[RMDB]
RNA sequence: GGGAACGACUCGAGUAGAGUCGAAAAGAAAGGAGGGACCCUCCCGAUCCGAGGGGCCCAACCACCAAGUUUGGAGAGCACUCCGGGCCGAAUGGUCGAGUAGCACUCAGAGGGAGGAAUCCACACGGCGGGUCAAAGUUCGCUUUGACCAAAAGAAACAACAACAACAAC
Reactivity to 2A3 in 0.01 (KOAc 150mM, MgCl2 10mM, bicine 150mM(pH8.5), 24C), signal-to-noise 9, nucleotides 027 to 129: g090a030a040a010g050g030a030g000g010g020a040c000c000c000u030c000c010c020g060a050u050c050c050g010a020g010g010g020g010c000c010c000a030a050c010c010a040c010c020a040a040g020u040u060u070g030g000a060g010a010g050c050a030c100u000c010c000g020g010g000c020c020g120a120a110u200g020g010u030c020g000a030g020u100a020g030c040a020c050u020c030a020g020a050g040g000g000a000g000g000a010a030u010c010c000a020c010a010c080g060g010c040g030
Reactivity to DMS in 0.01 (KOAc 150mM, MgCl2 10mM, bicine 150mM(pH8.5), 24C), signal-to-noise 9, nucleotides 027 to 129: g020a040a070a070g000g030a240g030g000g010a070c010c000c000u000c020c040c030g010a100u060c170c120g020a020g000g000g000g000c020c030c000a030a050c000c080a030c060c050a120a110g000u030u020u050g030g010a040g010a140g060c200a100c040u020c000c100g000g000g030c000c060g030a110a060u060g020g020u030c040g000a030g030u000a060g000c070a120c030u020c020a050g020a100g010g040g010a020g000g020a070a080u040c030c030a060c110a060c100g000g000c030g020
The record gives the reactivity of an RNA of 170 nucleotides to 2A3 and DMS. The reactions ran in a buffer of 150 mM KOAc, 10 mM MgCl2 and 150 mM bicine (pH 8.5), at 24 C. For DMS the reverse transcriptase was MarathonRT. For 2A3, 54,315 sequencing reads were counted. It was measured as part of the RMDB library 15KLIB.